Overview:
This 207-nucleotide RNA was probed chemically with DMS and 2A3. The RNA was probed in 150 mM KOAc, 10 mM MgCl2 and 150 mM bicine (pH 8.5) at 24 C. For DMS, 5,505 sequencing reads were counted. It was measured as part of the RMDB library OK3TST.
RNA sequence: GGGAACGACUCGAGUAGAGUCGAAAAGGCCAUCGGUUCUGCCUGUCCAUUUACGAUGGCCGAGGGACAGGAUUAUAUAUCAAUCGCCGAGAGGCGUACAGUUAGAGUAGCGAGGUCGUAUGACCGGACCGCUUAGACCUCGCGACGGUCCGGAAGACAGGUAUAUUACGUUCGCGUAAUAUACCUGAAAAGAAACAACAACAACAAC
Reactivity to DMS in 0.01 (KOAc 150mM, MgCl2 10mM, bicine 150mM(pH8.5), 24C), signal-to-noise 3, nucleotides 027 to 156: g010g020c010c000a010u000c000g020g030u000u000c100u000g000c030c020u000g000u000c020c020a150u020u000u010a030c040g020a040u010g010g020c000c010g020a080g020g020g000a060c020a080g000g000a130u010u000a160u000a130u000a120u020c050a120a160u000c040g000c000c000g000a170g010a290g020g040c000g030u010a030c110a070g020u010u000a100g030a120g000u000a090g000c030g010a230g050g020u000c010g050u000a120u000g020a110c000c020g000g010a050c030c020g020c030u000u000a160g000a130c060c020u000c060g010c010g000a020c000g000g000u010c010c020g000g000a100a080g020a240
Reactivity to 2A3 in 0.01 (KOAc 150mM, MgCl2 10mM, bicine 150mM(pH8.5), 24C), signal-to-noise 3, nucleotides 027 to 156: g010g010c010c000a010u000c010g080g080u190u050c070u150g040c010c000u010g020u040c010c000a070u090u100u120a080c030g020a040u020g000g000c020c000g000a090g030g010g000a010c010a010g010g060a060u180u040a100u060a050u020a010u160c060a100a060u030c020g010c000c000g070a070g000a000g030g000c000g020u030a040c010a030g030u080u180a070g000a060g100u090a010g040c020g020a010g030g020u050c070g100u150a070u160g040a060c040c000g000g020a000c010c000g020c020u000u010a030g020a060c010c000u010c020g030c000g000a010c010g020g010u010c000c000g000g010a040a000g050a020